Structure probing data (2A3 and DMS) for a 177-nucleotide construct. For DMS the reverse transcriptase was MarathonRT. The data come from the RNA Mapping Database (RMDB), library RFM100. For 2A3 the reverse transcriptase was SuperScript II with manganese.
[RMDB]
RNA sequence: GGGAACGACUCGAGUAGAGUCGAAAACUACAAAUCCCUGGACGAAGGUCAGAAAGUAUCCUUCACCAUCGAAAGCGGCGCUAAAGGCCCGGCAGCUGGCAACGUAACUUCUCUGUAAGUUCAAGCCGUAUCCGUGGUAGUUCGCUACCACGGAUACAAAAGAAACAACAACAACAAC
Reactivity to 2A3 in 0.01 (KOAc 150mM, MgCl2 10mM, bicine 150mM(pH8.5), 24C), signal-to-noise 4, nucleotides 027 to 126: c040u110a030c070a020a110a040u020c000c000c000u010g020g010a020c040g020a020a010g020g010u020c050a030g200a110a170a010g140u120a090u080c000c010u020u020c010a020c000c010a060u100c020g090a080a080a010g040c020g010g010c010g010c030u120a150a090a090g090g010c010c000c000g050g010c030a040g000c010u030g030g000c010a030a040c020g040u060a000a030c000u010u010c100u040c050u140g170u290a020a010g000u050u030c050a090a000g050c040c020
Reactivity to DMS in 0.01 (KOAc 150mM, MgCl2 10mM, bicine 150mM(pH8.5), 24C), signal-to-noise 2, nucleotides 027 to 126: c090u010a100c150a080a240a110u000c010c000c000u000g000g000a090c140g010a060a000g000g020u000c030a090g000a150a110a120g010u040a080u040c010c010u000u000c000a250c020c010a000u020c090g010a060a070a080g050c100g030g000c040g110c010u010a070a080a040g030g000c080c020c040g000g030c040a080g000c000u020g030g000c010a090a120c200g040u020a000a010c000u000u000c010u050c020u000g060u020a010a010g040u000u010c070a170a140g000c140c050